RNA sequence: GGGAACGACUCGAGUAGAGUCGAAAACUAAGGUUACAAUAAUAAAUGGCUAAAUCAGAAUUUCAACUUUGUUCAAUGGAUGUGCUAUUCAUAAUGGGUCUAUACUCAUCCUAUUGUGCAAUUCCAUCAGGAAGUGGAAAUAAGUUAUUAAGGGAGAUAUGGUAAAUUACUUCGGUAAUUUACCAUAAAAAGAAACAACAACAACAAC
Reactivity to DMS in 0.01 (KOAc 150mM, MgCl2 10mM, bicine 150mM(pH8.5), 24C), signal-to-noise 3, nucleotides 027 to 156: c060u010a050a100g020g030u000u000a070c050a080a120u000a080a110u000a070a120a060u010g000g000c040u000a060a070a120u010c060a090g010a130a090u000u000u000c030a030a040c050u000u000u010g020u000u000c090a040a060u010g010g010a080u000g020u010g000c060u000a050u000u000c020a060u010a060a060u010g010g030g030u000c140u000a170u010a080c050u010c020a070u000c020c030u000a030u000u010g030u000g020c030a060a110u000u010c000c000a030u000c060a120g010g010a040a050g030u010g000g000a030a010a030u000a030a110g010u010u000a060u000u000a090a070g010g000g010a120g000a210
Reactivity to 2A3 in 0.01 (KOAc 150mM, MgCl2 10mM, bicine 150mM(pH8.5), 24C), signal-to-noise 5, nucleotides 027 to 156: c010u040a070a070g050g040u100u120a050c050a110a050u170a170a030u110a090a150a030u090g050g010c020u070a070a030a030u110c060a070g120a210a110u070u150u100c030a060a030c040u080u070u050g040u030u050c020a020a020u010g010g000a010u010g030u030g050c070u050a040u060u100c040a040u090a180a080u090g070g020g000u000c050u060a090u060a090c000u010c020a020u010c010c010u060a040u030u030g020u010g000c000a010a060u070u000c040c020a030u050c020a080g090g030a090a030g010u030g010g050a000a010a030u130a070a000g010u030u060a050u070u070a060a020g040g010g000a080g010a060
Structure probing data (DMS and 2A3) for a 207-nucleotide construct. For DMS, 5,938 sequencing reads were counted. It was measured as part of the RMDB library OK3TST. For 2A3, 3,418 sequencing reads were counted. For 2A3 the reverse transcriptase was SuperScript II with manganese. The reactions ran in a buffer of 150 mM KOAc, 10 mM MgCl2 and 150 mM bicine (pH 8.5), at 24 C.